[RMDB]
An RNA of 177 nucleotides, treated with DMS and 2A3 and read out base by base. The RNA was probed in 150 mM KOAc, 10 mM MgCl2 and 150 mM bicine (pH 8.5) at 24 C. 2A3 adducts were read by reverse transcription with SuperScript II with manganese. DMS adducts were read by reverse transcription with MarathonRT. Values are in units of 0.01, from 0 to 300, in steps of 10. The 2A3 profile rests on 4,593 reads. For DMS, 2,593 sequencing reads were counted. The data come from the RNA Mapping Database (RMDB), library TTRDEL.

RNA sequence: GGGAACGACUCGAGUAGAGUCGAAAAGAUAUGGAAAUCUCUCGAUAAGCCACCAUCGGAAACGAUGGUCUGGCUUUUGACGAGACUUCCUAAGUCAAACUAACUUCAAGUUCGCUUGAAGUUAGAAGCCUAUUCUAAACUUCGGUUUAGAAUAGGCAAAAGAAACAACAACAACAAC
Reactivity to DMS in 0.01 (KOAc 150mM, MgCl2 10mM, bicine 150mM(pH8.5), 24C), signal-to-noise 3, nucleotides 027 to 126: g010a020u000a300u000g000g010a020a000a030u000c010u000c010u000c010g020a060u010a010a020g000c000c000a050c000c000a000u000c000g000g000a120a100a210c010g010a010u000g010g000u000c090u000g020g010c000u000u000u010u000g010a050c170g000a010g010a020c030u000u000c000c000u000a050a100g010u010c010a080a090a280c000u000a000a000c000u000u000c000a000a010g000u000u010c270g020c000u010u000g000a010a000g000u000u000a000g000a070a090
Reactivity to 2A3 in 0.01 (KOAc 150mM, MgCl2 10mM, bicine 150mM(pH8.5), 24C), signal-to-noise 2, nucleotides 027 to 126: g000a020u050a030u110g010g000a000a020a020u020c020u000c000u000c030g080a100u040a270a050g000c020c020a020c000c000a000u000c000g020g010a080a030a020c010g000a000u000g020g040u040c030u010g020g000c000u020u000u000u020g000a000c000g010a000g000a000c000u010u010c000c000u020a180a000g030u030c040a080a030a100c000u000a000a010c000u000u010c000a010a020g030u030u130c180g180c130u000u000g000a010a000g000u010u010a010g010a020a010